[RMDB]
RNA sequence: GGGAACGACUCGAGUAGAGUCGAAAAUUGAAAGUGUUGCUGCCUGCCUUGCAGCAACCGCUGAAUAUUCAGCCGUGGCGUGAUGAGGUUAUAGCCUUAAAACAACAGCAUAGCUGGCGUUAUGACCGUCAAUCGCAGGAUUCGUCCUGCGAUUGACAAAAGAAACAACAACAACAAC
Reactivity to 2A3 in 0.01 (KOAc 150mM, MgCl2 10mM, bicine 150mM(pH8.5), 24C), signal-to-noise 2, nucleotides 027 to 126: u080u090g020a000a060a000g080u090g040u040u000g000c020u000g000c020c000u110g020c010c040u080u190g010c010a000g000c000a000a010c000c010g000c000u040g040a130a030u190a160u300u110c000a000g040c060c100g130u120g000g040c030g000u080g060a120u120g020a010g000g070u030u160a100u190a160g020c000c020u080u100a080a180a000a020c110a020a030c020a000g020c020a120u070a190g050c010u020g050g040c010g000u030u050a040u100g030a020c090c000
Reactivity to DMS in 0.01 (KOAc 150mM, MgCl2 10mM, bicine 150mM(pH8.5), 24C), signal-to-noise 2, nucleotides 027 to 126: u000u030g010a230a010a030g010u000g020u010u010g000c000u000g000c000c190u020g040c120c050u000u020g010c000a010g000c000a000a000c030c010g010c010u000g000a060a210u030a080u010u000c040a050g080c000c070g000u000g010g020c060g000u030g000a080u020g010a180g030g000u010u000a040u000a070g020c010c030u020u000a030a030a120a170c210a070a050c020a020g010c020a180u000a210g000c050u000g010g020c080g020u020u010a040u020g000a020c090c030
This 177-nucleotide RNA was probed chemically with 2A3 and DMS.
The reactions ran in a buffer of 150 mM KOAc, 10 mM MgCl2 and 150 mM bicine (pH 8.5), at 24 C.
The data come from the RNA Mapping Database (RMDB), library OK2TRN.
For DMS the reverse transcriptase was MarathonRT.
Reactivities are given for positions 27 through 126.